[RMDB]
RNA sequence: GGGAACGACUCGAGUAGAGUCGAAAACAUGGGGAACUACAUCUGUGUCGCGAGUUCGAUUCUCGCCAGGGCCUGGUCCUGUAGCUCAGUUGGUAGAGCAAGCUGGUCCCCGGACACUUGUCGUCAUAAAAGUUGCCCCCGUUCGCGGGGGCAACAAGUAGCUUCAUAAGUUCGCUUAUGAAGCUACAAAAGAAACAACAACAACAAC
Reactivity to 2A3 in 0.01 (KOAc 150mM, MgCl2 10mM, bicine 150mM(pH8.5), 24C), signal-to-noise 1, nucleotides 027 to 156: c020a100u110g000g010g000g000a030a020c030u150a020c100a020u000c000u010g050u030g020u180c020g000c000g000a000g020u000u020c000g000a010u010u000c010u010c010g000c000c010a010g010g030g000c040c230u230g150g010u050c020c000u000g000u010a000g000c000u000c000a030g020u130u110g090g160u160a000g010a010g010c000a000a000g000c020u030g000g000u000c010c020c000c000g030g040a030c020a020c030u060u270g070u160c030g020u020c040a030u130a200a120a010a010g020u000u010g000c010c010c060c000c000g030u010u010c120g010c000g060g060g030g000g000c000a000a000c000a010a000
Reactivity to DMS in 0.01 (KOAc 150mM, MgCl2 10mM, bicine 150mM(pH8.5), 24C), signal-to-noise 2, nucleotides 027 to 156: c060a130u000g000g010g000g000a020a060c000u000a100c040a070u000c040u020g010u010g020u010c010g000c030g000a040g020u000u030c050g000a300u000u020c000u000c000g020c010c030a090g020g010g030c010c080u000g070g010u000c020c030u000g000u010a080g010c010u030c000a120g030u010u000g000g040u010a100g010a090g000c040a210a160g020c060u020g020g010u010c000c010c010c000g040g000a120c050a050c120u000u000g030u000c020g000u010c020a080u000a070a090a100a170g000u000u010g020c000c010c000c000c010g050u000u010c240g020c000g000g000g010g080g000c000a020a010c020a020a120

Structure probing data (2A3 and DMS) for a 207-nucleotide construct. The DMS profile rests on 2,314 reads. Values cover nucleotides 27 to 156. Source: RMDB library M2RFPK, as collected in RNAgym. DMS adducts were read by reverse transcription with MarathonRT.